[RMDB]
RNA sequence: GGGAACGACUCGAGUAGAGUCGAAAAGGGGUCGAUCUAAGACAGGACAUGCUCCCUGGUCUGAAGCCUCCACGGACCUGCGUAGGAUAGGAGCAACAGCUCGAGAUCGACGGAGGCACCCAAAACAUCACGUUGAAGUUCGCUUCAACGUGAUGAACGCAUAAAGAUCGUUCGCGAUCUUUAUGCGAAAAGAAACAACAACAACAAC
Reactivity to 2A3 in 0.01 (KOAc 150mM, MgCl2 10mM, bicine 150mM(pH8.5), 24C), signal-to-noise 6, nucleotides 027 to 156: g170g010g040g020u000c010g010a010u000c020u060a230a060g080a100c090a070g130g150a090c100a160u270g000c000u000c000c000c010u010g000g030u000c000u000g020a060a010g000c010c000u000c000c000a020c000g000g000a010c000c000u020g040c150g170u210a150g060g270a250u220a140g000g010a010g030c040a110a070c070a110g030c030u000c000g020a010g010a040u000c000g000a000c010g000g000a000g000g000c000a020c000c000c000a010a070a010a040c010a000u000c000a000c010g000u000u000g000a000a000g010u090u140c190g090c190u000u000c000a000a000c000g000u000g000a000u000g000a010a010
Reactivity to DMS in 0.01 (KOAc 150mM, MgCl2 10mM, bicine 150mM(pH8.5), 24C), signal-to-noise 2, nucleotides 027 to 156: g010g040g050g020u000c050g020a040u000c050u000a050a120g020a170c060a130g020g030a160c090a170u000g000c030u000c030c010c020u030g030g000u000c010u000g060a080a110g010c000c000u000c000c020a300c030g000g000a040c000c000u000g020c050g040u000a190g000g020a240u000a090g040g000a040g080c020a110a150c090a180g000c000u010c020g010a080g000a080u000c000g020a080c040g050g040a060g020g040c000a100c020c000c010a070a040a050a280c000a000u000c020a000c030g000u000u000g020a060a030g020u010u010c300g000c010u010u000c000a000a010c000g000u020g000a000u000g030a010a150

The record gives the reactivity of an RNA of 207 nucleotides to 2A3 and DMS. 2A3 adducts were read by reverse transcription with SuperScript II with manganese. DMS adducts were read by reverse transcription with MarathonRT.